[RMDB]
Chemical mapping of a 177-nucleotide RNA with DMS and 2A3. The data come from the RNA Mapping Database (RMDB), library M2PK90. The 2A3 profile rests on 3,348 reads.

RNA sequence: GGGAACGACUCGAGUAGAGUCGAAAAAGAAAGAGCAACUUAGGAUUUUAGGCUCCCCGGCGUGUCUCGAACCAAGCCGGGCCAAACCCAUAGGGCUGGCGGUCCCUGUGCGGUCAAAAUUCAAAAAUCAGAUAACGUAGUUCGCUACGUUAUCUGAAAAAGAAACAACAACAACAAC
Reactivity to DMS in 0.01 (KOAc 150mM, MgCl2 10mM, bicine 150mM(pH8.5), 24C), signal-to-noise 3, nucleotides 027 to 126: a060g000a100a050a060g000a010g010c030a020a060c110u000u000a020g010g000a030u000u000u000u000a120g000g000c010u010c010c000c000c010g000g010c010g010u010g000u000c080u000c260g020a120a160c190c070a020a050g020c010c000g000g000g010c050c040a030a300a030c010c000c000a010u000a030g000g000g010c020u000g010g000c130g020g000u010c010c000c000u000g020u000g000c120g020g000u020c080a000a030a010a010u000u010c010a050a060a070a080a080
Reactivity to 2A3 in 0.01 (KOAc 150mM, MgCl2 10mM, bicine 150mM(pH8.5), 24C), signal-to-noise 2, nucleotides 027 to 126: a000g130a010a070a000g010a000g000c010a000a050c050u030u040a030g010g010a030u030u010u020u030a010g000g030c010u020c000c000c000c000g000g010c060g070u110g030u000c030u040c110g070a100a060c040c050a100a040g000c000c010g000g000g000c010c000a010a000a000c000c000c000a000u020a000g010g010g020c030u060g140g070c040g050g000u090c000c000c000u000g000u010g000c090g000g030u010c000a000a010a010a020u060u030c030a060a030a010a020a070